[RMDB]
RNA sequence: GGGAACGACUCGAGUAGAGUCGAAAAGGCUCAGGAAACUGAGCCAAGAAUGAUCAGAGAAAAGAACUAGUGACUGAUCAGAACAGAAUAAAAGUACACUAGAAAAUAGGAGCAGGAAACUGCUCCACGGAUUUAUCGGAUUCGUCCGAUAAAUCCGAAAAGAAACAACAACAACAAC
Reactivity to 2A3 in 0.01 (KOAc 150mM, MgCl2 10mM, bicine 150mM(pH8.5), 24C), signal-to-noise 3, nucleotides 027 to 126: g000g000c000u000c000a000g070g010a030a030a090c010u000g000a000g000c010c000a000a000g000a010a070u040g010a000u010c020a000g030a000g040a050a130a060a010g180a030a060c000u000a000g010u000g080a070c000u010g000a010u000c010a000g020a080a070c070a010g150a150a020u190a110a080a040a010g110u100a040c020a010c010u010a000g090a070a070a020a050u240a130g000g010a020g020c000a000g010g010a080a040a040c010u000g010c000u000c000c000a000
Reactivity to DMS in 0.01 (KOAc 150mM, MgCl2 10mM, bicine 150mM(pH8.5), 24C), signal-to-noise 1, nucleotides 027 to 126: g000g000c000u000c000a000g030g020a190a050a210c000u020g000a000g000c010c000a080a030g000a110a110u020g000a000u000c020a000g000a240g060a070a010a060a020g000a100a110c000u000a070g000u000g020a090c040u000g000a040u000c020a020g000a280a060c130a130g000a030a100u040a050a010a130a100g000u000a100c040a020c000u000a000g060a180a090a050a190u040a010g000g000a000g000c000a000g000g000a110a070a140c000u000g000c000u000c000c000a000